[RMDB]
RNA sequence: GGGAACGACUCGAGUAGAGUCGAAAACACAUCGACCCGAGGGUUUGCUACUUCGAUGUCGUCUGUUCCUAUCCUGGUGCUGCAUAAGACACCAAGGGUGGGGCUGUUCGCCCAUUAAAAGGGAUCCGAAUAUACCGUGCUUCGGCACGGUAUAUUCAAAAGAAACAACAACAACAAC
Reactivity to 2A3 in 0.01 (KOAc 150mM, MgCl2 10mM, bicine 150mM(pH8.5), 24C), signal-to-noise 2, nucleotides 027 to 126: c050a010c020a050u050c010g050a070c060c030c000g130a240g040g160g030u100u110u240g080c000u000a030c010u110u130c010g070a060u180g020u020c040g000u000c050u030g050u030u160c000c000u020a000u020c000c000u010g000g000u010g000c020u060g000c030a070u110a300a060g000a070c000a000c010c000a040a050g030g000g000u030g010g000g000g000c020u010g060u070u220c080g010c000c020c010a070u150u300a110a160a030a060g000g000g050a020u000c100c060
Reactivity to DMS in 0.01 (KOAc 150mM, MgCl2 10mM, bicine 150mM(pH8.5), 24C), signal-to-noise 2, nucleotides 027 to 126: c220a100c180a070u000c010g020a030c000c060c030g040a170g000g000g020u000u010u010g020c070u000a060c050u030u010c010g010a010u010g010u000c020g020u010c010u000g000u000u010c000c000u000a010u000c010c000u000g000g020u000g000c020u010g000c210a080u000a090a040g040a110c000a010c000c000a020a080g000g000g000u010g020g000g000g050c020u010g000u000u010c110g010c020c000c010a100u010u000a070a090a050a100g010g000g000a130u000c180c120